[RMDB]
The record gives the reactivity of an RNA of 177 nucleotides to 2A3 and DMS.

RNA sequence: GGGAACGACUCGAGUAGAGUCGAAAACCAGCCGGGGCCGGACGUCGUUUUGGUGUCUGAUUCGGUAACCGAAUCGGGAGCACCAUCUGCGUAGGCUUGUGGUUUAAGGCUUGCGCCACCUACGGUCGCCCCUUUAACUAUUCGUAGUUAAAGGGGCAAAAGAAACAACAACAACAAC
Reactivity to 2A3 in 0.01 (KOAc 150mM, MgCl2 10mM, bicine 150mM(pH8.5), 24C), signal-to-noise 9, nucleotides 027 to 126: c000c000a000g010c000c010g020g000g020g020c020c010g080g160a020c010g020u080c020g010u030u020u120u110g000g000u010g040u040c010u010g000a000u000u000c000g020g040u110a130a120c130c000g000a000a000u010c010g010g020g040a130g070c000a000c000c000a000u010c010u020g000c000g010u010a030g020g000c000u010u040g060u030g020g060u020u040u140a060a030g030g010c050u060u100g030c060g000c030c010a010c000c030u060a040c020g030g020u050c050
Reactivity to DMS in 0.01 (KOAc 150mM, MgCl2 10mM, bicine 150mM(pH8.5), 24C), signal-to-noise 2, nucleotides 027 to 126: c010c000a180g000c030c040g000g000g010g010c020c010g000g040a040c070g010u000c080g010u020u000u010u020g010g000u000g010u010c010u010g000a000u000u000c010g000g000u010a150a100c100c000g010a010a010u000c000g010g010g000a150g060c010a010c000c010a020u000c080u000g000c010g000u000a070g000g000c010u000u010g010u020g000g000u000u010u010a120a080g010g000c010u000u020g010c130g010c000c050a050c030c030u000a070c040g010g020u010c110

DMS adducts were read by reverse transcription with MarathonRT. Values cover nucleotides 27 to 126.